[RMDB]
RNA sequence: GGGAACGACUCGAGUAGAGUCGAAAAGAUAUGGACCAACACGCUUGGGGCAGCCGAAGAACGUGUUGCUCUCGGAAACGAGAGCAACACGGGAGGCUGUUCUUUGUAAGCGCGUUGGUCCUAAGUCCAUCAGUAUCUUCUUCGGAAGAUACUGAUGAAAAGAAACAACAACAACAAC
Reactivity to DMS in 0.01 (KOAc 150mM, MgCl2 10mM, bicine 150mM(pH8.5), 24C), signal-to-noise 2, nucleotides 027 to 126: g000a040u000a230u010g000g010a010c000c000a010a020c000a000c020g000c000u000u000g010g000g030g000c000a010g020c010c000g040a150a190g030a140a170c000g020u000g000u000u000g000c000u000c000u000c000g000g000a030a060a150c000g010a020g020a030g030c030a000a010c000a000c020g010g000g000a100g000g020c010u000g020u000u000c000u000u000u030g020u000a000a020g000c000g030c030g010u000u000g000g000u010c000c000u000a000a050g010u000c020
Reactivity to 2A3 in 0.01 (KOAc 150mM, MgCl2 10mM, bicine 150mM(pH8.5), 24C), signal-to-noise 1, nucleotides 027 to 126: g000a000u040a040u110g010g010a000c000c000a030a000c020a030c000g000c020u070u130g050g000g030g040c020a020g000c000c020g180a300a180g160a150a040c020g010u000g030u030u010g010c000u060c020u030c040g050g000a050a070a000c010g000a030g000a000g050c030a000a020c000a010c000g010g040g000a020g010g000c000u000g000u000u000c000u040u030u130g230u210a000a000g020c000g000c000g000u000u010g000g040u000c000c000u000a000a000g000u000c000
Conditions: 150 mM KOAc, 10 mM MgCl2 and 150 mM bicine (pH 8.5), 24 C. This 177-nucleotide RNA was probed chemically with DMS and 2A3. The DMS profile rests on 3,901 reads. The data come from the RNA Mapping Database (RMDB), library TTRINS. For 2A3 the reverse transcriptase was SuperScript II with manganese. For DMS the reverse transcriptase was MarathonRT.